[RMDB]
RNA sequence: GGGAACGACUCGAGUAGAGUCGAAAACGCGUCGCAACCCGGGUGCGCGGCGGCGAUGGGUGCGUUGCUGCUCGCCAACCGUGGGGGAGAGCGCGAUUCGCGAACGCGGACGUCCAUCGGCCUCGCCAUCUGGAGCUGAAUUCGUUCAGCUCCAGAUAAAAGAAACAACAACAACAAC
Reactivity to DMS in 0.01 (KOAc 150mM, MgCl2 10mM, bicine 150mM(pH8.5), 24C), signal-to-noise 3, nucleotides 027 to 126: c030g020c050g000u010c070g010c090a260a150c030c000c000g000g030g010u020g020c280g040c040g000g020c030g000g000c000g000a020u000g000g000g000u040g020c020g000u000u000g000c010u010g000c060u020c020g020c010c060a140a050c030c020g010u080g000g000g000g010g000a140g010a070g000c040g000c010g000a160u000u050c050g020c010g000a110a030c130g010c050g000g000a070c060g010u030c010c000a060u020c090g010g010c040c000u000c030g000c070c110
Reactivity to 2A3 in 0.01 (KOAc 150mM, MgCl2 10mM, bicine 150mM(pH8.5), 24C), signal-to-noise 6, nucleotides 027 to 126: c010g010c010g040u030c010g030c060a030a070c010c000c000g020g010g010u070g010c080g000c030g010g000c040g000g020c000g010a020u060g020g110g160u290g060c070g020u010u030g000c010u050g000c030u050c080g010c010c010a040a070c040c010g100u240g000g000g000g030g010a080g020a040g030c010g000c000g030a100u090u120c050g000c010g020a070a020c050g010c020g010g040a050c030g030u020c020c000a040u050c020g080g000c000c010u040c030g010c020c010
The record gives the reactivity of an RNA of 177 nucleotides to DMS and 2A3. The RNA was probed in 150 mM KOAc, 10 mM MgCl2 and 150 mM bicine (pH 8.5) at 24 C. Values are in units of 0.01, from 0 to 300, in steps of 10. Reactivities are given for positions 27 through 126.